The data come from the RNA Mapping Database (RMDB), library M2PK90. This 177-nucleotide RNA was probed chemically with DMS and 2A3. The 2A3 profile rests on 7,816 reads. The RNA was probed in 150 mM KOAc, 10 mM MgCl2 and 150 mM bicine (pH 8.5) at 24 C.
RNA sequence: GGGAACGACUCGAGUAGAGUCGAAAAUUAAAGGAGGAGGAGGAGUGUGUGUCUUCCCAGCUGCUGAGUAGAACCUCCGCACACACGGGAAAGCUACGAGCAGCAGCAGUGCGGAAACGGUGAAAAACGAUUACGAAAGAUUCGUCUUUCGUAAUCGAAAAGAAACAACAACAACAAC
Reactivity to DMS in 0.01 (KOAc 150mM, MgCl2 10mM, bicine 150mM(pH8.5), 24C), signal-to-noise 6, nucleotides 027 to 126: u000u010a060a110a100g010g010a070g000g000a070g010g010a070g000g010a080g020u000g020u000g020u010g010u000c090u000u000c010c010c010a160g010c010u000g010c010u000g010a140g020u000a020g010a060a110c140c060u020c010c020g010c040a090c210a080c210a080c050g000g000g000a050a100a090g000c020u000a010c030g010a090g020c030a020g000c010a030g010c040a070g010u000g000c110g010g000a060a030a070c100g010g000u000g000a050a030a050a080a150
Reactivity to 2A3 in 0.01 (KOAc 150mM, MgCl2 10mM, bicine 150mM(pH8.5), 24C), signal-to-noise 4, nucleotides 027 to 126: u100u060a060a030a040g030g020a030g010g020a020g020g020a020g040g000a080g020u080g010u010g000u020g010u060c040u030u030c000c010c010a010g000c010u010g000c000u010g000a010g040u030a010g020a040a050c010c010u050c010c000g000c000a140c000a000c000a020c020g020g010g000a100a130a020g050c010u020a000c030g080a100g100c030a000g000c000a000g000c010a020g100u090g060c060g010g000a060a050a010c060g050g040u140g060a060a030a010a010a020